RNA sequence: GGGAACGACUCGAGUAGAGUCGAAAAAACACACGUACUUCAGCUGACCCGGGCAAGGUUCUAGUAGGAAGUAUUGUGUGAUUAUUUUUUUUUCACACUCAGAACGUAAGUGCCAAGGCUCUCACUAAAACAUUCUUACGUUCGCGUAAGAAUGUUUAAAAGAAACAACAACAACAAC
Reactivity to 2A3 in 0.01 (KOAc 150mM, MgCl2 10mM, bicine 150mM(pH8.5), 24C), signal-to-noise 6, nucleotides 027 to 126: a000a010c030a000c000a000c010g010u000a000c000u000u010c010a030g000c010u010g010a030c000c020c000g080g140g010c130a140a050g000g000u050u020c040u130a020g030u030a110g040g230a010a010g000u030a020u230u280g000u000g000u000g010a000u010u010a020u010u040u020u000u000u010u010u020u040c040a040c000a010c020u070c040a060g040a190a030c040g060u100a090a060g040u030g040c020c010a040a040g030g000c000u000c000u010c010a060c030u080a020
Reactivity to DMS in 0.01 (KOAc 150mM, MgCl2 10mM, bicine 150mM(pH8.5), 24C), signal-to-noise 5, nucleotides 027 to 126: a060a040c020a010c020a020c000g000u000a000c000u000u000c010a300g000c000u000g000a030c020c000c020g000g020g000c290a140a090g000g010u000u000c060u020a010g020u010a090g010g000a010a020g000u000a010u000u030g020u000g010u000g000a050u010u010a000u000u000u000u000u000u010u000u000u010c040a090c060a060c050u010c060a060g000a060a050c120g010u010a040a040g010u020g000c030c040a050a100g000g000c040u000c020u010c040a070c100u020a050